[RMDB]
RNA sequence: GGGAACGACUCGAGUAGAGUCGAAAAGGGCCAUCGGCGAAAACGGCAUUCCCGCUUCCGCCGACUAUGCCGAUGCGCGACAGGCCGAAAUCAUCGCGGUGGCACAAAGCGUGCUCGCUCGCCGCGACCCUCCCUGAUAUUUCGAUAUCAGGGAGGGAAAAGAAACAACAACAACAAC
Reactivity to DMS in 0.01 (KOAc 150mM, MgCl2 10mM, bicine 150mM(pH8.5), 24C), signal-to-noise 5, nucleotides 027 to 126: g000g000g000c020c030a150u000c020g000g000c020g010a030a040a100a080c010g000g010c110a300u010u000c080c020c010g010c130u000u010c090c070g000c020c000g000a030c120u000a160u020g010c010c010g010a050u010g010c130g000c010g000a060c110a110g000g010c000c010g010a090a070a070u010c110a180u000c000g000c030g000g000u000g000g010c040a090c120a040a110a100g000c130g020u000g000c050u010c170g000c060u000c080g000c010c000g010c010g010a050
Reactivity to 2A3 in 0.01 (KOAc 150mM, MgCl2 10mM, bicine 150mM(pH8.5), 24C), signal-to-noise 5, nucleotides 027 to 126: g060g000g000c010c000a020u010c020g010g000c030g020a010a020a020a060c000g000g010c020a040u120u110c030c010c010g000c060u140u010c030c060g000c000c000g010a020c040u070a050u230g000c000c010g020a040u050g050c090g000c010g100a050c050a050g070g000c000c020g080a060a060a060u160c130a020u020c020g000c000g030g040u090g030g000c050a010c050a080a200a020g110c070g060u060g040c050u020c080g040c020u070c030g000c000c000g010c010g020a030
The data come from the RNA Mapping Database (RMDB), library OK2TST. Chemical mapping of a 177-nucleotide RNA with DMS and 2A3. Values cover nucleotides 27 to 126.